[RMDB]
RNA sequence: GGGAACGACUCGAGUAGAGUCGAAAAGCCAAGCUGGGUACCAUCGUGAGCGACGAGUCAACGGCCGUGGGGCUGCCGACGCCCAAGCUCGUUGUGGAGCCCGGACGCGCCAUCGCCGGACCGGGCACUCGGAGCUGUUAUUCGUAACAGCUCCGAGAAAAGAAACAACAACAACAAC
Reactivity to DMS in 0.01 (KOAc 150mM, MgCl2 10mM, bicine 150mM(pH8.5), 24C), signal-to-noise 1, nucleotides 027 to 126: g000c060c040a150a100g040c040u020g000g000g010u000a100c020c070a070u010c070g020u010g050a040g020c040g010a120c120g010a150g010u010c020a060a020c130g010g040c020c070g040u000g030g000g030g030c070u000g040c020c020g010a070c010g000c000c040c050a150a210g000c030u000c010g000u000u000g010u000g000g010a190g010c010c010c010g020g040a200c040g000c170g070c020c090a120u010c110g010c070c010g020g000a100c020c020g040g010g010c050a070
Reactivity to 2A3 in 0.01 (KOAc 150mM, MgCl2 10mM, bicine 150mM(pH8.5), 24C), signal-to-noise 1, nucleotides 027 to 126: g060c010c000a020a020g090c060u110g000g000g060u100a070c060c000a060u050c070g020u030g060a080g010c030g100a060c010g000a070g070u060c010a120a000c060g030g030c030c040g050u140g000g110g040g000c050u090g120c020c020g050a020c030g000c000c000c000a000a010g010c030u030c050g020u010u030g040u010g010g050a040g030c000c000c000g020g020a010c000g060c010g000c020c040a210u200c140g060c040c060g010g030a120c000c000g000g030g020c000a010